[RMDB]
RNA sequence: GGGAACGACUCGAGUAGAGUCGAAAAGGGGUCGAGGCAAUGAUGGGAUAUUGUCAGUUUGUGCUGAAGCCUCCACGGCACAAGAACUUGGAUUUAUAUCCUUGAGCCUCGACGGAGGCACCCAAAACAGAACAGCUACUUCGGUAGCUGUUCUGAAGUUACCUGUGUACUUCGGUACACAGGUAACAAAAGAAACAACAACAACAAC
Reactivity to 2A3 in 0.01 (KOAc 150mM, MgCl2 10mM, bicine 150mM(pH8.5), 24C), signal-to-noise 3, nucleotides 027 to 156: g080g020g030g010u000c000g010a010g030g000c010a110a300u130g010a040u070g070g000g000a000u000a020u040u180g080u060c050a080g050u020u050u000g000u010g020c010u000g050a150a040g010c000c010u000c000c010a030c020g000g000c000a010c010a040a070g070a190a150c140u220u300g110g040a060u170u180u060a070u060a010u020c000c010u020u020g030a000g000c000c000u000c000g000a000c000g010g000a010g000g010c010a000c000c020c000a030a080a020a040c000a000g000a000a000c000a000g010c000u010a010c010u060u190c270g110g000u000a000g000c000u000g000u000u000c000u010g000a000a000
The record gives the reactivity of an RNA of 207 nucleotides to 2A3. The reactions ran in a buffer of 150 mM KOAc, 10 mM MgCl2 and 150 mM bicine (pH 8.5), at 24 C. Values cover nucleotides 27 to 156. The 2A3 profile rests on 2,311 reads.